[RMDB]
RNA sequence: GGGAACGACUCGAGUAGAGUCGAAAAGAUAUGGACCCACUAAGCGAUAUGUACCGUUGAAAUCGGAAACGAUGGAGGUAGAUAUCGUAUGUGGGUCCUAAGUCAAAGCAUAGGUUCGCCUAUGCAAUCCUAGAGUGAAGUUCGCUUCACUCUAGGAAAAAGAAACAACAACAACAAC
Reactivity to 2A3 in 0.01 (KOAc 150mM, MgCl2 10mM, bicine 150mM(pH8.5), 24C), signal-to-noise 4, nucleotides 027 to 126: g030a000u080a040u140g000g000a010c000c050c020a010c010u090a270a140g030c000g020a010u000a000u020g300u030a050c010c050g170u280u070g010a020a020a000u000c010g000g090a100a030a020c000g010a010u010g020g010a020g030g010u000a000g060a030u000a010u000c000g010u010a040u110g000u000g000g000g010u000c000c000u010a010a000g000u000c010a050a040a020g000c000a000u010a010g030g010u030u070c260g090c040c010u010a000u020g000c000a000a020
Reactivity to DMS in 0.01 (KOAc 150mM, MgCl2 10mM, bicine 150mM(pH8.5), 24C), signal-to-noise 4, nucleotides 027 to 126: g000a050u000a300u000g000g000a010c000c000c000a000c000u000a160a300g010c000g000a020u000a000u000g000u000a010c010c000g020u000u000g000a100a120a040u000c000g000g000a130a090a200c000g010a000u010g000g000a070g010g020u000a000g000a000u000a000u000c010g040u000a130u000g030u000g000g010g000u000c000c000u000a010a060g010u010c030a080a090a170g000c000a000u000a000g000g010u010u010c300g010c000c000u000a010u000g000c000a060a040